[RMDB]
RNA sequence: GGGAACGACUCGAGUAGAGUCGAAAACGGGACGGUCGGCAACCGUCCUUUUGAGUGCAAGAGCGUAAGCGGGCUUGACUGCGAGGCCCACGAGCCGAGCAGGUGCGAAAGCAGGCUCUAGUGAUCCGAAAUGCGUUUAGUUCGCUAAACGCAUUUCAAAAGAAACAACAACAACAAC
Reactivity to DMS in 0.01 (KOAc 150mM, MgCl2 10mM, bicine 150mM(pH8.5), 24C), signal-to-noise 5, nucleotides 027 to 126: c120g010g000g000a010c000g000g000u000c130g020g010c300a170a200c000c030g000u010c000c000u000u020u000u000g000a050g040u000g000c050a040a020g000a150g000c040g000u030a080a120g000c040g010g000g010c000u010u000g000a100c010u020g020c010g000a300g000g010c010c000c130a160c300g010a150g040c000c000g000a270g020c010a010g010g000u000g000c020g020a070a080a120g000c020a070g000g010c000u010c000u000a080g020u010g000a060u040c090c090
Reactivity to 2A3 in 0.01 (KOAc 150mM, MgCl2 10mM, bicine 150mM(pH8.5), 24C), signal-to-noise 4, nucleotides 027 to 126: c050g000g000g010a000c010g000g030u080c050g130g080c030a030a000c000c000g020u020c000c000u010u020u000u020g010a010g000u090g010c040a080a020g010a020g040c110g140u150a130a030g020c030g070g050g000c020u040u060g050a060c000u020g000c010g010a040g000g000c000c010c030a090c120g030a010g000c000c000g000a010g000c010a000g000g030u060g040c030g070a100a010a000g000c010a010g020g020c020u000c000u000a070g040u010g100a150u070c070c030